Structure probing data (DMS and 2A3) for a 177-nucleotide construct. For DMS the reverse transcriptase was MarathonRT. For DMS, 128,526 sequencing reads were counted.
RNA sequence: GGGAACGACUCGAGUAGAGUCGAAAAAGGUGUGUCCGGGUGUCAUUGGAGAGUGAUGGCCCUGCAGUACACCGUUAGCUUGAGGAUCGCCAGUGGUUCUGGACUCAAGUUCUGCCGGUGACAUCCAUCAAGUCAACGGGUUCGCUCGUUGGCUUGAAAAAGAAACAACAACAACAAC
Reactivity to DMS in 0.01 (KOAc 150mM, MgCl2 10mM, bicine 150mM(pH8.5), 24C), signal-to-noise 9, nucleotides 027 to 126: a060g000g010u000g010u010g010u020c110c100g010g010g010u010g010u000c010a020u000u010g000g020a110g020a100g010u020g010a050u010g010g010c010c010c010u010g000c110a100g010u010a070c030a020c010c010g000u010u020a070g000c020u000u000g000a030g000g010a110u030c170g000c010c010a020g010u010g010g020u020u020c000u000g000g010a150c040u000c030a030a020g010u010u010c040u000g010c020c010g000g010u000g000a050c050a050u010c010c020a240
Reactivity to 2A3 in 0.01 (KOAc 150mM, MgCl2 10mM, bicine 150mM(pH8.5), 24C), signal-to-noise 9, nucleotides 027 to 126: a000g070g010u050g000u020g040u050c060c030g010g010g000u070g010u010c020a030u020u070g100g050a090g020a030g090u110g050a060u060g060g010c000c000c010u020g030c060a030g020u030a020c010a010c010c000g010u030u070a010g000c010u000u020g010a010g040g070a160u150c100g050c060c000a030g010u140g140g120u270u120c000u010g010g010a030c010u010c030a020a000g000u030u020c030u080g070c010c010g000g000u010g000a010c010a030u000c010c000a030